The record gives the reactivity of an RNA of 177 nucleotides to 2A3. The RNA was probed in 150 mM KOAc, 10 mM MgCl2 and 150 mM bicine (pH 8.5) at 24 C.
RNA sequence: GGGAACGACUCGAGUAGAGUCGAAAACGGCGACUUAUUUCGUGGGCGGGUGCGCAGUGGGCGGCGGGCUCCGUGCGAGAUGCGUGCCAGGAUGGCCAGCAAUAUGUAGUUGGCCAGCAGUGAAGACGCCGAUGGAGUCAUUCGUGACUCCAUCGGCAAAAGAAACAACAACAACAAC
Reactivity to 2A3 in 0.01 (KOAc 150mM, MgCl2 10mM, bicine 150mM(pH8.5), 24C), signal-to-noise 1, nucleotides 027 to 126: c000g000g070c040g050a010c000u000u200a040u300u200u120c000g050u040g070g000g050c030g000g000g000u040g120c060g000c000a050g060u110g000g060g000c050g040g000c060g000g000g050c150u050c060c000g100u230g070c000g000a020g060a000u020g020c000g060u000g020c000c000a000g200g090a300u070g010g000c010c010a000g000c000a000a190u180a100u300g110u150a130g000u000u000g000g000c010c000a000g000c060a040g020u180g060a080a130g060a000c000